This 177-nucleotide RNA was probed chemically with 2A3.

RNA sequence: GGGAACGACUCGAGUAGAGUCGAAAAGCUCGGAGACGAGCAAGGCUGACAAAACGGUGUCCCAACCUCCACGUGGUGUCGGCUGGAUAAUGCUGCAUUAUGUUGCAUUUAUCAACUGGGAACUAAACCCGCAUACGAUGUUCGCAUCGUAUGCGGGAAAAGAAACAACAACAACAAC
Reactivity to 2A3 in 0.01 (KOAc 150mM, MgCl2 10mM, bicine 150mM(pH8.5), 24C), signal-to-noise 2, nucleotides 027 to 126: g000c000u000c020g020g060a110g050a070c010g000a000g040c000a000a010g070g000c000u000g000a010c000a000a040a040a040c090g080g000u010g040u010c000c000c000a000a000c000c000u000c050c030a170c040g080u060g000g000u000g020u000c000g030g030c020u030g000g000a000u000a060a000u000g000c020u010g000c010a110u180u180a140u300g040u080u000g070c000a000u060u090u120a000u010c000a000a080c180u130g020g050g030a000a000c000u010a050a020a020

For 2A3, 892 sequencing reads were counted. The data come from the RNA Mapping Database (RMDB), library OK1LIB.